An RNA of 207 nucleotides, treated with 2A3 and read out base by base.
Conditions: 150 mM KOAc, 10 mM MgCl2 and 150 mM bicine (pH 8.5), 24 C.
Source: RMDB library OK3TST, as collected in RNAgym.

RNA sequence: GGGAACGACUCGAGUAGAGUCGAAAAAAGGAAACUUUGAUCAUUACUUUUCUAUUCGAGAAUUGUAGAUUUAAAAUUUCUUGUCUAUUAAGACAUGUCUACAAAAAACGCGUUGAAUGAUUCCCAGAUAAAGUUAUUAAAUUCUUUAAAUGACAAACCAUAAUGAUCAUUUCGAUGAUCAUUAUGGAAAAGAAACAACAACAACAAC
Reactivity to 2A3 in 0.01 (KOAc 150mM, MgCl2 10mM, bicine 150mM(pH8.5), 24C), signal-to-noise 1, nucleotides 027 to 156: a010a010g140g000a140a080a000c020u060u060u120g000a060u080c040a000u140u300a250c040u040u230u210u020c000u020a040u000u000c000g000a000g130a170a110u090u000g000u000a020g000a020u050u120u240a070a180a090a210u100u300u130c000u070u140g020u000c020u000a180u220u250a180a000g000a020c020a000u080g010u000c000u000a010c000a000a030a000a000a030a030c170g030c030g020u080u100g060a120a020u090g020a180u000u070c030c000c000a000g020a070u160a050a070a000g030u050u030a030u140u120a220a190a270u100u010c000u150u120u070a230a200a200u140g020a000c070a010a130a000